[RMDB]
RNA sequence: GGGAACGACUCGAGUAGAGUCGAAAAAAGAAACAGGUUCUUCUUCGAAAAUGGUGUACCUUUCGGAGAGGUCAUCUUCAAUUCGUGUCACCAACGAGAAGAAACGGCUGGACCUGCUCAAGGUCAGCCAGGUACUGCCGUUCGCGGCAGUACCUGGAAAAGAAACAACAACAACAAC
Reactivity to 2A3 in 0.01 (KOAc 150mM, MgCl2 10mM, bicine 150mM(pH8.5), 24C), signal-to-noise 4, nucleotides 027 to 126: a000a000g160a030a050a020c090a060g000g040u000u000c010u010u030c000u130u110c030g110a130a120a100a160u120g030g010u030g030u140a040c000c000u040u030u110c090g020g000a010g010a000g040g120u140c050a120u000c020u020u020c000a040a100u070u080c090g030u070g110u220c010a020c060c000a040a040c010g020a000g000a040a000g050a020a040a010c010g020g020c010u080g040g030a060c000c000u050g040c030u050c120a050a040g000g010u010c000a000g040
Reactivity to DMS in 0.01 (KOAc 150mM, MgCl2 10mM, bicine 150mM(pH8.5), 24C), signal-to-noise 2, nucleotides 027 to 126: a070a020g020a140a070a150c020a020g040g000u000u000c030u020u000c010u030u020c010g020a170a070a100a140u000g000g030u030g000u030a010c030c080u020u000u010c100g000g000a040g000a020g000g030u010c300a060u010c000u000u000c000a090a030u010u000c130g000u010g010u000c030a010c000c020a060a270c010g000a050g000a000a000g000a010a010a010c070g020g000c020u000g000g010a030c000c010u000g010c090u010c060a110a030g000g000u000c040a070g000
Overview:
Chemical mapping of a 177-nucleotide RNA with 2A3 and DMS. 2A3 adducts were read by reverse transcription with SuperScript II with manganese. The 2A3 profile rests on 3,152 reads. It was measured as part of the RMDB library OK1LIB. Conditions: 150 mM KOAc, 10 mM MgCl2 and 150 mM bicine (pH 8.5), 24 C.